Background:
The data come from the RNA Mapping Database (RMDB), library M2PK50. The record gives the reactivity of an RNA of 177 nucleotides to 2A3 and DMS. For DMS the reverse transcriptase was MarathonRT. The RNA was probed in 150 mM KOAc, 10 mM MgCl2 and 150 mM bicine (pH 8.5) at 24 C.

RNA sequence: GGGAACGACUCGAGUAGAGUCGAAAAGCUGUCAGCUUCGGCUGACAGCAAACGCUCAUCUCAUGGAGCGCAAGACGAAUAGCUACAUAUUCGACAUCAGAAAAAGCUGCGCGUUCGCGCGCAGCAACACGAAGUAUCAGUUCGCUGAUACUUCGUGAAAAGAAACAACAACAACAAC
Reactivity to 2A3 in 0.01 (KOAc 150mM, MgCl2 10mM, bicine 150mM(pH8.5), 24C), signal-to-noise 2, nucleotides 027 to 126: g000c000u020g010u000c000a030g010c050u000u090c170g150g000c020u000g010a000c010a000g020c000a010a010a010c000g000c000u050c010a160u070c050u060c100a110u170g140g000a020g000c010g030c230a160a010g110a050c020g010a050a040u040a020g000c050u270a150c130a180u060a090u050u050c020g040a050c040a160u210c060a070g140a060a090a020a020a040g030c000u010g000c010g000c000g030u020u060c240g040c040g000c030g040c100a000g010c000a000a000
Reactivity to DMS in 0.01 (KOAc 150mM, MgCl2 10mM, bicine 150mM(pH8.5), 24C), signal-to-noise 1, nucleotides 027 to 126: g020c000u000g020u000c000a000g020c000u010u020c220g060g010c020u000g010a020c000a000g040c010a010a110a070c020g000c000u010c020a070u000c080u000c050a110u000g000g000a010g030c000g010c140a080a050g020a170c020g020a040a040u000a010g020c120u010a170c140a140u000a080u000u000c000g040a110c170a110u000c130a110g030a060a080a060a150a080g010c000u000g000c000g020c000g030u010u000c170g030c020g040c010g000c010a010g010c000a040a050